[RMDB]
RNA sequence: GGGAACGACUCGAGUAGAGUCGAAAAGUAAUAGAUAAGAGGAUGACGAGAAAGGGUGCGCUGAUAUCCUUUACGAAUGCUAGCAGUAAAUAGAAUAGCGCUCCUAAUACAACUAGCAACAAAAGGAUAAGGUAUCGUGAUGUCAAUCACAUUGCGAAAUUAUUACGCAUUUCGAUGCGUAAUAAUUAAAAGAAACAACAACAACAAC
Reactivity to 2A3 in 0.01 (KOAc 150mM, MgCl2 10mM, bicine 150mM(pH8.5), 24C), signal-to-noise 9, nucleotides 027 to 156: g030u030a010a130u050a110g060a060u080a120a080g010a010g060g010a020u050g020a030c040g010a020g050a070a040a030g030g010g000u050g010c040g000c010u020g040a040u020a020u140c000c000u020u020u030a070c090g060a120a070u050g010c010u010a010g000c070a030g040u100a040a070a130u110a070g090a070a070u050a060g040c030g010c040u040c010c000u030a060a010u060a020c010a040a030c010u000a000g000c010a010a050c010a030a090a010a000g020g000a010u030a050a040g060g010u080a040u120c010g000u010g010a010u010g030u060c080a060a050u120c020a030c010a010u000u040g000c000g010a020
Reactivity to DMS in 0.01 (KOAc 150mM, MgCl2 10mM, bicine 150mM(pH8.5), 24C), signal-to-noise 6, nucleotides 027 to 156: g010u010a070a130u010a100g010a120u010a070a140g010a070g020g000a090u000g020a130c050g010a130g000a080a100a090g000g030g020u000g030c060g030c030u000g010a150u000a080u000c020c040u000u020u000a110c090g000a130a150u000g020c020u000a020g010c050a160g030u000a050a080a140u000a100g000a060a110u000a070g010c050g010c070u000c020c010u000a050a210u000a080c040a090a060c000u000a010g010c020a050a130c060a070a050a040a010g010g010a040u010a040a190g020g020u000a110u000c010g040u000g000a010u000g010u000c030a100a110u010c180a110c010a030u000u010g000c000g010a030